RNA sequence: GGGAACGACUCGAGUAGAGUCGAAAAGCAGCUGACUCCACCGACGUAGUCAUGCCUGAACUCGGCGAGUCCGUCACCGAAGGCACCAUCACCCAGUGGCUGAAGUCCGUUGGCGACACCGUCGACGACCCAUACCGCAGUUCGCUGCGGUAUGGGUAAAAGAAACAACAACAACAAC
Reactivity to 2A3 in 0.01 (KOAc 150mM, MgCl2 10mM, bicine 150mM(pH8.5), 24C), signal-to-noise 3, nucleotides 027 to 126: g090c040a000g030c040u060g030a050c010u060c000c030a080c030c090g100a050c120g100u090a020g010u080c010a040u160g020c000c010u060g040a040a040c020u010c040g000g020c030g010a030g080u030c090c050g030u010c030a040c050c040g010a060a030g040g000c060a040c030c010a040u050c000a050c040c040c000a010g030u010g050g030c090u060g050a050a010g060u040c050c040g040u050u010g010g020c030g060a100c050a040c100c040g030u030c000g020a030c020g050
Reactivity to DMS in 0.01 (KOAc 150mM, MgCl2 10mM, bicine 150mM(pH8.5), 24C), signal-to-noise 4, nucleotides 027 to 126: g020c070a080g010c060u000g010a040c020u010c020c070a090c110c140g000a090c090g010u000a020g010u000c030a060u000g020c040c020u000g000a110a090c110u000c020g000g000c040g020a050g020u000c090c090g010u010c110a070c020c020g010a060a090g010g010c040a040c020c020a040u010c070a140c040c000c050a130g040u010g010g010c130u000g010a080a090g010u000c050c030g040u000u000g000g020c020g010a080c180a090c090c030g020u000c030g010a030c100g000